[RMDB]
An RNA of 207 nucleotides, treated with 2A3 and DMS and read out base by base. The reactions ran in a buffer of 150 mM KOAc, 10 mM MgCl2 and 150 mM bicine (pH 8.5), at 24 C.
RNA sequence: GGGAACGACUCGAGUAGAGUCGAAAAGAAGAAAUGAACCGUAUGUUGGCUGAUAACUUUAAAUUUGUUUUGCAGGCAUAUUAAUGAGUAAUUUCCACAACGAACAUGUGAUGCAGUUCUAUCGUAACAAUCUUAAAACUAAAGGCGUCUUCGGACGCUCCUCCCCUAUGUUCGCAUAGGGGAGGAGAAAAGAAACAACAACAACAAC
Reactivity to 2A3 in 0.01 (KOAc 150mM, MgCl2 10mM, bicine 150mM(pH8.5), 24C), signal-to-noise 3, nucleotides 027 to 156: g080a020a000g030a010a070a030u090g000a020a060c050c060g020u040a060u060g070u050u040g030g000c060u020g050a090u020a180a040c020u050u110u130a030a140a120u130u090u060g050u010u040u030u060g020c050a040g020g020c030a010u000a020u160u090a100a060u160g040a000g020u070a020a090u030u070u050c030c030a040c020a130a070c050g050a020a000c050a110u080g020u050g060a070u100g060c020a000g000u010u000c030u040a060u050c050g050u060a060a040c030a080a060u040c020u110u150a080a130a080a100c040u070a060a060a050g090g010c000g050u090c000u050u050c100g050g000a000c000g000
Reactivity to DMS in 0.01 (KOAc 150mM, MgCl2 10mM, bicine 150mM(pH8.5), 24C), signal-to-noise 2, nucleotides 027 to 156: g020a100a060g010a030a080a040u010g010a060a100c030c020g000u000a070u000g010u030u010g050g040c020u000g010a050u010a040a090c050u000u010u000a030a150a180u000u000u010g010u000u000u000u000g000c090a070g030g000c010a050u000a070u000u000a060a070u000g010a110g020u060a060a120u030u040u050c030c080a120c030a050a080c060g000a060a060c060a080u000g010u020g010a080u000g010c050a050g000u000u000c050u000a090u010c060g010u000a090a080c100a070a110u000c070u000u020a020a040a090a110c030u000a020a100a070g010g010c020g010u000c010u000u000c220g010g000a050c040g000